[RMDB]
RNA sequence: GGGAACGACUCGAGUAGAGUCGAAAAGUAUCUCCAAAAGAGAUAUGAAAGGAGGUGAUGGUUUUGAGUUACCUUUUCGAGCUCUUACUUAGUGUCCUGGCAAAUGUAUUGGCCUAUUUCAUUUGCACUAUUCCGAUAAUUUCGAUUAUCGGAAUAGAAAAGAAACAACAACAACAAC
Reactivity to DMS in 0.01 (KOAc 150mM, MgCl2 10mM, bicine 150mM(pH8.5), 24C), signal-to-noise 7, nucleotides 027 to 126: g010u000a000u000c010u000c000c030a120a110a160a300g000a010g000a010u010a010u000g000a110a140a170g010g000a030g000g020u000g010a010u000g000g010u010u010u030u020g010a200g010u000u000a020c030c000u000u000u000u000c020g000a080g010c000u000c000u000u010a020c010u000u000a030g000u010g000u000c010c010u010g010g010c010a010a010a010u000g000u000a060u000u010g000g020c100c090u010a080u010u000u000c010a020u000u000u000g000c030a250
Reactivity to 2A3 in 0.01 (KOAc 150mM, MgCl2 10mM, bicine 150mM(pH8.5), 24C), signal-to-noise 9, nucleotides 027 to 126: g010u000a010u000c000u000c000c010a020a010a040a030g020a000g000a010u020a010u070g100a100a090a050g140g020a020g010g060u040g020a030u060g060g280u150u140u230u270g230a190g020u020u050a030c000c000u020u030u020u030c050g020a090g080c010u000c020u070u110a030c000u000u010a020g010u010g010u040c010c020u010g070g000c000a000a010a010u030g040u070a070u090u150g170g040c030c050u060a120u010u070u020c010a010u000u000u020g000c010a010
Conditions: 150 mM KOAc, 10 mM MgCl2 and 150 mM bicine (pH 8.5), 24 C. An RNA of 177 nucleotides, treated with DMS and 2A3 and read out base by base.